[RMDB]
Overview
Chemical mapping of a 177-nucleotide RNA with 2A3. The reactions ran in a buffer of 150 mM KOAc, 10 mM MgCl2 and 150 mM bicine (pH 8.5), at 24 C. The data come from the RNA Mapping Database (RMDB), library OK1LIB. The 2A3 profile rests on 790 reads.
RNA sequence: GGGAACGACUCGAGUAGAGUCGAAAAGACUGCGUGCACUUGAGACGAUAUCGAGCCGGAAAUUAAUCGAUAAUGUCUCUCGUAGUGGAUACGAUCCGGCAAGUAUCGACUACCUGUGCUCGUAGGAGACUGGCAUGGACUUCGGUCCAUGCCAGUCAAAAGAAACAACAACAACAAC
Reactivity to 2A3 in 0.01 (KOAc 150mM, MgCl2 10mM, bicine 150mM(pH8.5), 24C), signal-to-noise 2, nucleotides 027 to 126: g080a000c020u020g000c000g030u090g010c050a000c040u070u090g000a000g000a010c030g000a010u000a000u080c000g020a020g010c010c000g000g080a050a050a040u300u180a090a080u080c010g000a000u000a080a060u160g040u040c000u000c000u080c090g020u010a040g020u010g110g000a020u040a050c050g000a000u000c000c000g000g000c080a030a000g000u000a000u000c010g050a000c000u050a040c030c100u060g000u040g020c000u000c000g000u030a020g000g000a030